[RMDB]
This 177-nucleotide RNA was probed chemically with DMS. DMS adducts were read by reverse transcription with MarathonRT. The reactions ran in a buffer of 150 mM KOAc, 10 mM MgCl2 and 150 mM bicine (pH 8.5), at 24 C.

RNA sequence: GGGAACGACUCGAGUAGAGUCGAAAAGAUAUGGACCGUGGACAUGAGUGUCCAUCGGAAACGAUGGGCACUCAACAGCCACGUCCUAAGUCAAAGUGUAAAAAGCGCUUCGGCGCUUUUUACACAACGUAACUAUGCCGUUCGCGGCAUAGUUACGAAAAGAAACAACAACAACAAC
Reactivity to DMS in 0.01 (KOAc 150mM, MgCl2 10mM, bicine 150mM(pH8.5), 24C), signal-to-noise 1, nucleotides 027 to 126: g010a010u000a300u010g020g000a040c160c130g030u010g000g030a010c100a210u010g000a020g020u020g000u010c000c000a000u020c000g050g000a080a060a130c000g020a010u010g000g000g020c010a010c030u010c000a030a010c290a120g000c000c000a000c010g050u000c010c000u000a040a090g010u000c020a110a160a140g010u010g000u000a000a000a000a020a000g010c000g040c010u000u010c270g020g020c010g000c000u000u000u000u000u000a000c010a000c020a040a080